[RMDB]
RNA sequence: GGGAACGACUCGAGUAGAGUCGAAAAGAAUUGGUAUGUAAGCUACUUCUUCCAGUAGCUGCGUCAUAACAUCAAUGUUAUGCAUACUGAGCCGAAGCUCAGCUUCGGUCCUCCAAGGAAGACCAAAUACAGCUCAGCCCGUUCGCGGGCUGAGCAAGUCAUGGCUAAUGUUCGCAUUAGCCAUGACAAAAGAAACAACAACAACAAC
Reactivity to 2A3 in 0.01 (KOAc 150mM, MgCl2 10mM, bicine 150mM(pH8.5), 24C), signal-to-noise 2, nucleotides 027 to 156: g080a010a060u020u010g010g010u010a010u000g000u000a030a000g000c000u000a000c000u070u060c000u000u010c000c000a010g000u000a000g000c000u000g000c010g000u000c000a010u000a010a010c000a060u210c120a130a130u180g000u000u000a000u000g010c000a000u000a000c000u010g010a000g010c000c000g010a000a000g000c010u090c300a040g000c000u010u000c000g000g000u000c010c010u060c060c060a060a050g010g000a000a000g000a000c020c060a000a040a040u200a090c070a030g000c020u000c000a000g000c000c020c000g050u060u070c110g010c020g070g000g010c000u000g000a000g000c000a000a000
Reactivity to DMS in 0.01 (KOAc 150mM, MgCl2 10mM, bicine 150mM(pH8.5), 24C), signal-to-noise 1, nucleotides 027 to 156: g020a060a070u000u020g030g020u000a000u000g050u000a300a300g000c000u000a010c000u000u010c010u010u000c000c030a300g050u000a000g010c000u010g020c190g010u040c020a000u000a000a030c010a290u010c100a190a260u010g010u000u000a060u000g000c010a020u000a010c010u000g010a140g000c030c020g020a070a010g090c020u000c210a180g000c030u000u000c010g010g000u000c030c030u000c050c090a080a140g030g010a020a030g010a150c060c060a010a050a070u000a140c170a200g060c000u000c000a000g000c020c000c000g080u010u000c300g020c000g010g040g050c010u000g000a010g020c000a000a070